[RMDB]
RNA sequence: GGGAACGACUCGAGUAGAGUCGAAAAGCGGUGAUCGCGGAGUUGGUUGCCGACCCACAGCGGCGGGCACAACUCGACGGCUGGCGAUACGGUUGGGUGCUCAAUAUCGGUGCUGCGAUCACCGGCGAGAGAGAGAUACGUUCGCGUAUCUCUCUCUAAAAGAAACAACAACAACAAC
Reactivity to DMS in 0.01 (KOAc 150mM, MgCl2 10mM, bicine 150mM(pH8.5), 24C), signal-to-noise 2, nucleotides 027 to 126: g010c030g000g010u000g000a000u000c000g030c030g020g010a150g030u000u000g030g000u010u000g010c010c010g010a050c020c010c040a160c120a110g030c100g000g000c010g010g010g010c070a100c190a110a110c010u020c030g040a080c110g010g030c040u010g000g020c110g030a090u000a090c170g020g000u000u000g000g010g000u000g010c050u010c130a110a130u000a110u000c050g030g010u040g030c010u000g020c010g010a010u000c000a000c000c000g000g030c100g020
Reactivity to 2A3 in 0.01 (KOAc 150mM, MgCl2 10mM, bicine 150mM(pH8.5), 24C), signal-to-noise 2, nucleotides 027 to 126: g050c010g000g020u000g000a000u010c000g030c010g020g010a050g040u030u030g100g020u200u110g110c010c000g090a140c010c030c010a140c050a060g070c090g060g000c000g020g030g030c100a040c000a080a110c030u010c030g100a080c040g050g120c040u060g030g080c100g100a090u080a240c050g070g000u070u050g140g020g060u150g030c000u030c040a040a070u120a030u120c090g030g140u190g070c000u000g020c000g010a010u030c010a000c010c000g010g020c070g000